[RMDB]
RNA sequence: GGGAACGACUCGAGUAGAGUCGAAAAGUUAAAAGUACUAUUACAGAUUGUUCAAUUGUAUGCCCCUUUCCUUUGAACGGAAUAUUAAAAGCUAUGUGCAGUAACUUUUAAUAGGCAUACCACUUUUAAAUUAGAUAUUCUUCGGAAUAUCUAAUUUAAAAGAAACAACAACAACAAC
Reactivity to 2A3 in 0.01 (KOAc 150mM, MgCl2 10mM, bicine 150mM(pH8.5), 24C), signal-to-noise 3, nucleotides 027 to 126: g120u110u150a000a070a000a100g080u030a080c130u050a060u300u080a080c090a080g200a300u030u040g050u050u080c090a090a100u080u080g010u000a000u020g010c040c010c010c000u010u000u020c040c010u120u110u250g030a040a010c030g000g010a010a020u000a000u000u000a010a000a010a010g020c020u010a010u060g060u090g140c030a020g100u010a010a030c000u020u000u000u000a010a010u030a030g000g000c000a000u010a000c020c010a010c010u020u000u020u000